This 177-nucleotide RNA was probed chemically with 2A3. It was measured as part of the RMDB library RFM100. The RNA was probed in 150 mM KOAc, 10 mM MgCl2 and 150 mM bicine (pH 8.5) at 24 C.
RNA sequence: GGGAACGACUCGAGUAGAGUCGAAAAAGUGCGAGCUCCUUCAACUCGUUCUGUCCGGUGAGGAGUGAUCCAGCUUGGGCUGACGAGAGGCUCCGGAGCCUUCACGUUCAGUGCUUUUUACCUGCCAUCGGGCUUCGAUGUUCGCAUCGAAGCCCGAAAAAGAAACAACAACAACAAC
Reactivity to 2A3 in 0.01 (KOAc 150mM, MgCl2 10mM, bicine 150mM(pH8.5), 24C), signal-to-noise 1, nucleotides 027 to 126: a010g080u050g000c000g000a000g000c000u000c000c000u000u170c090a160a070c000u040c040g110u180u050c030u060g000u030c010c000g020g000u060g030a300g020g030a040g010u170g090a010u000c000c000a000g010c060u280u300g000g000g000c000u000g000a000c000g000a000g010a000g150g000c000u080c110c060g000g000a000g060c000c000u000u110c130a050c010g130u270u300c010a010g000u000g000c000u040u020u000u000u020a090c010c000u000g150c030c010a110